RNA sequence: GGGAACGACUCGAGUAGAGUCGAAAAGAUGUGAAGCCGUGACGGUGCAGGCGAUAAUUGUGCUCGUAGACGUGUCGAGGCGUUUCAUCGACCAGCGAAACGCUGGCUUCGCGAGCUGCAGCUAAACGGCUACCAUCGGUUUCGACCGAUGGUAGCCAAAAGAAACAACAACAACAAC
Reactivity to 2A3 in 0.01 (KOAc 150mM, MgCl2 10mM, bicine 150mM(pH8.5), 24C), signal-to-noise 1, nucleotides 027 to 126: g000a000u130g020u020g110a030a000g000c060c050g000u090g000a030c080g040g100u000g000c000a000g000g000c000g000a000u000a040a150u060u140g020u000g020c000u000c090g080u060a050g030a200c260g030u080g000u200c020g000a030g000g030c010g000u000u020u000c020a040u100c020g040a170c000c030a010g070c000g130a220a090a000c000g000c040u040g000g000c050u000u000c010g020c060g020a020g000c000u020g050c030a030g020c080u000a030a030a010c020